Structure probing data (DMS and 2A3) for a 177-nucleotide construct. Reactivities are given for positions 27 through 126. Source: RMDB library TTRDES, as collected in RNAgym. As a SHAPE reagent, 2A3 marks flexible, mostly unpaired nucleotides at the ribose 2'-OH. For DMS, 2,013 sequencing reads were counted. Conditions: 150 mM KOAc, 10 mM MgCl2 and 150 mM bicine (pH 8.5), 24 C. The 2A3 profile rests on 3,966 reads. DMS adducts were read by reverse transcription with MarathonRT.
[RMDB]
RNA sequence: GGGAACGACUCGAGUAGAGUCGAAAAAAGAUAUGGAGUAUGCCGAGCACCUCGCUCGAAGAACACAUAUCGGAAACGAUAUGUGGGAGAGCACGCGAGGUGCGUUUGACGCAUACUCCUAAGUCAAGCUAACUAGCAUGUUCGCAUGCUAGUUAGCAAAAGAAACAACAACAACAAC
Reactivity to DMS in 0.01 (KOAc 150mM, MgCl2 10mM, bicine 150mM(pH8.5), 24C), signal-to-noise 3, nucleotides 027 to 126: a070a050g020a070u020a300u000g020g010a030g020u000a010u000g000c000c000g000a110g010c000a000c000c020u000c000g020c000u000c230g020a030a060g010a300a280c000a000c000a000u000a000u000c000g050g000a120a100a180c000g000a000u000a020u000g030u000g060g000g000a230g020a030g010c090a090c200g010c010g000a000g020g030u000g000c000g000u000u030u010g020a180c300g000c000a000u000a000c000u000c010c000u000a000a050g020u000c120a070a210
Reactivity to 2A3 in 0.01 (KOAc 150mM, MgCl2 10mM, bicine 150mM(pH8.5), 24C), signal-to-noise 1, nucleotides 027 to 126: a000a000g080a040u100a070u100g000g020a010g000u000a010u020g030c030c030g080a050g000c010a010c000c000u040c010g020c020u070c050g050a160a040g030a070a000c020a010c020a010u010a010u020c000g020g000a060a050a010c000g000a000u000a030u020g000u000g010g020g000a110g000a010g030c190a030c170g050c040g020a020g010g000u010g000c000g000u010u030u050g010a010c030g000c000a000u000a020c000u000c010c000u000a000a020g000u000c040a000a040